Notes
This 177-nucleotide RNA was probed chemically with DMS and 2A3. Conditions: 150 mM KOAc, 10 mM MgCl2 and 150 mM bicine (pH 8.5), 24 C. For 2A3 the reverse transcriptase was SuperScript II with manganese. In probing experiments dimethyl sulfate is read out at A N1 and C N3, which are open when not base-paired. The 2A3 profile rests on 2,822 reads.
RNA sequence: GGGAACGACUCGAGUAGAGUCGAAAACACUAAAGGCAUGACAGCAAGCACCGGCCCUUCUUUUAAGUUCAACUUCAUUCGGUCUUUUGUCAAGCGACAUGAAUGAGUUUGUGUGUACCGACACAUAGUAUGUUCUCGGUUUCGACCGAGAACAUACAAAAGAAACAACAACAACAAC
Reactivity to DMS in 0.01 (KOAc 150mM, MgCl2 10mM, bicine 150mM(pH8.5), 24C), signal-to-noise 2, nucleotides 027 to 126: c070a140c170u010a000a100a040g000g020c010a070u000g020a110c050a080g000c050a060a060g020c050a040c050c000g010g000c020c030c080u000u000c050u000u020u020u010a040a070g000u010u000c040a040a020c010u030u060c020a050u000u000c000g000g000u000c000u020u030u040u000g030u060c220a080a080g000c130g000a010c010a020u030g010a020a000u000g000a040g050u000u020u020g010u010g020u000g000u000a030c070c130g020a140c020a010c030a030u030a070
Reactivity to 2A3 in 0.01 (KOAc 150mM, MgCl2 10mM, bicine 150mM(pH8.5), 24C), signal-to-noise 5, nucleotides 027 to 126: c050a010c080u160a130a010a070g070g020c040a070u080g030a080c050a040g030c020a060a050g000c020a020c040c000g010g030c000c020c000u130u080c000u000u190u060u070a090a080g010u060u070c050a060a020c030u110u050c040a020u000u020c010g020g020u050c000u000u190u140u160g260u140c110a100a000g060c020g060a000c060a110u170g040a020a020u020g000a030g050u000u070u120g000u020g000u000g000u070a100c020c050g130a020c030a000c000a030u020a060